Structure probing data (DMS and 2A3) for a 207-nucleotide construct.
RNA sequence: GGGAACGACUCGAGUAGAGUCGAAAACCCUGCUUCGGCAGGGGACACCCGUAGGGUGUACUACCCACCGCUAGGACAGGAGGCUCUUCGAAAGAGGAGCUACCCACCCUGUUUAGCGAGGUACACCCUAAACGGUCCAUUUGCGAUUCGUCGCAAACACUCUACCCAAAUUCGUUUGGGUAGAGUGAAAAGAAACAACAACAACAAC
Reactivity to DMS in 0.01 (KOAc 150mM, MgCl2 10mM, bicine 150mM(pH8.5), 24C), signal-to-noise 2, nucleotides 027 to 156: c010c000c000u000g000c000u000u010c300g030g000c000a020g110g070g000g030a030c040a080c090c000c000g010u000a060g000g030g040u000g000u000a010c010u000a030c030c040c000a300c130c010g020c010u000a080g010g000a040c010a020g000g000a300g000g000c000u000c020u000u000c040g010a200a150a280g010a020g000g010a030g040c020u000a000c030c020c030a300c140c000c010u000g000u000u000u000a030g040c000g010a020g030g010u000a020c000a000c030c020c000u010a100a010a060c000g020g000u000c040c030a250u000u000u000g000c000g040a110u000u000c250g030u010c000g020c000a020a040a120
Reactivity to 2A3 in 0.01 (KOAc 150mM, MgCl2 10mM, bicine 150mM(pH8.5), 24C), signal-to-noise 3, nucleotides 027 to 156: c000c000c000u000g000c000u030u100c280g150g000c000a000g000g000g010g050a020c020a090c030c010c020g000u040a040g000g000g010u010g000u010a010c000u050a040c020c100c050a050c020c010g000c010u020a020g100g070a020c000a000g000g010a010g020g000c000u010c000u010u010c010g050a090a050a040g000a010g010g000a000g000c010u040a050c020c020c000a050c010c000c010u000g000u020u010u010a010g000c000g000a000g000g000u000a000c000a000c010c020c000u020a060a020a000c020g020g060u060c060c020a140u030u040u040g000c000g010a010u050u080c200g030u030c020g140c000a010a020a000
Annotation
For DMS, 2,646 sequencing reads were counted. Source: RMDB library RNAMAK, as collected in RNAgym. The RNA was probed in 150 mM KOAc, 10 mM MgCl2 and 150 mM bicine (pH 8.5) at 24 C.